[RMDB]
RNA sequence: GGGAACGACUCGAGUAGAGUCGAAAAAUUAUGACUCACGCUCAUGAAGAAUACCCCCGAGAAUGCUGCGGGGUAGUCACCCAAAAGGGCCGCGUGCAAAAAUACCAUCGCGUUGAUAAUGUACACCGCGAUCCUGAAAAUCACUUCAUGAUGGACGGAGCUAUUACCAAUUCGUUGGUAAUAGCUCAAAAGAAACAACAACAACAAC
Reactivity to DMS in 0.01 (KOAc 150mM, MgCl2 10mM, bicine 150mM(pH8.5), 24C), signal-to-noise 1, nucleotides 027 to 156: a050u000u000a120u000g000a140c030u000c040a140c050g000c090u010c000a030u000g120a020a010g020a220a140u010a060c010c000c000c010c040g020a230g000a100a080u000g030c120u000g040c080g020g020g000g000u000a010g020u000c020a170c000c000c010a060a080a300a150g000g060g030c030c030g130c030g010u000g000c010a000a090a090a180a280u010a080c000c000a030u000c170g000c120g010u000u020g020a020u010a050a080u000g030u000a100c060a050c240c030g040c000g010a020u020c010c000u050g000a100a000a080a040u000c040a110c040u000u000c030a010u000g010a050u000g040g030a160c050g000
Reactivity to 2A3 in 0.01 (KOAc 150mM, MgCl2 10mM, bicine 150mM(pH8.5), 24C), signal-to-noise 2, nucleotides 027 to 156: a010u210u090a140u140g010a020c010u010c020a020c020g060c010u020c020a020u050g110a060a000g040a000a080u140a100c000c000c010c050c030g000a050g090a300a150u270g070c110u080g030c130g000g000g030g000u000a010g000u000c020a140c040c000c030a090a120a000a070g010g010g000c000c000g020c120g010u080g020c020a000a040a010a130a030u110a080c030c020a060u150c100g030c050g080u000u020g010a090u070a290a030u110g070u070a090c000a000c030c040g000c000g000a020u040c000c000u060g000a060a080a000a020u080c030a020c030u060u050c020a020u080g040a060u090g130g000a030c040g060